[RMDB]
RNA sequence: GGGAACGACUCGAGUAGAGUCGAAAAUAUAGAACGCUAUAUGGUAAGAUACUUUGUAUAACGAUAUGGAUGUCAUGGAUUUUAUGGAAUAUUCACUGGUGUGUUAUAGACAGAGCCGUAACAGCGUAUUUGGCUUUAAGUUUUGGAUAUAUCCUACCUGCAGUACACUAUUCGUAGUGUACUGCAGAAAAGAAACAACAACAACAAC
Reactivity to DMS in 0.01 (KOAc 150mM, MgCl2 10mM, bicine 150mM(pH8.5), 24C), signal-to-noise 3, nucleotides 027 to 156: u000a140u000a060g010a200a160c070g020c020u000a090u000a040u000g010g060u000a020a130g000a190u000a060c060u000u010u010g020u000a090u000a030a070c060g030a140u010a050u000g000g010a070u010g010u000c050a080u010g000g010a160u000u000u010u000a100u000g020g010a050a100u000a060u000u000c000a060c080u000g040g030u000g000u000g020u000u000a090u000a140g000a090c050a110g000a110g010c000c010g040u010a080a040c080a100g040c030g000u010a230u000u000u000g010g020c030u020u000u000a070a130g020u010u000u010u030g010g000a150u000a100u010a110u000c020c000u000a140c190
Reactivity to 2A3 in 0.01 (KOAc 150mM, MgCl2 10mM, bicine 150mM(pH8.5), 24C), signal-to-noise 4, nucleotides 027 to 156: u140a000u020a020g100a100a010c020g000c050u020a020u000a020u170g040g020u080a070a030g020a110u110a060c050u080u140u130g060u060a040u050a120a030c040g020a010u030a030u140g100g000a040u060g050u060c030a050u040g030g020a080u080u060u050u100a060u110g040g010a090a000u060a040u070u060c040a020c090u040g050g010u040g010u010g010u040u090a060u010a040g020a010c080a020g040a010g040c010c010g000u030a030a030c010a030g070c010g050u020a100u060u100u080g000g020c000u040u050u060a060a060g040u050u030u080u120g010g020a000u030a020u020a030u120c020c000u010a060c000
An RNA of 207 nucleotides, treated with DMS and 2A3 and read out base by base. Values cover nucleotides 27 to 156. It was measured as part of the RMDB library OK3TST.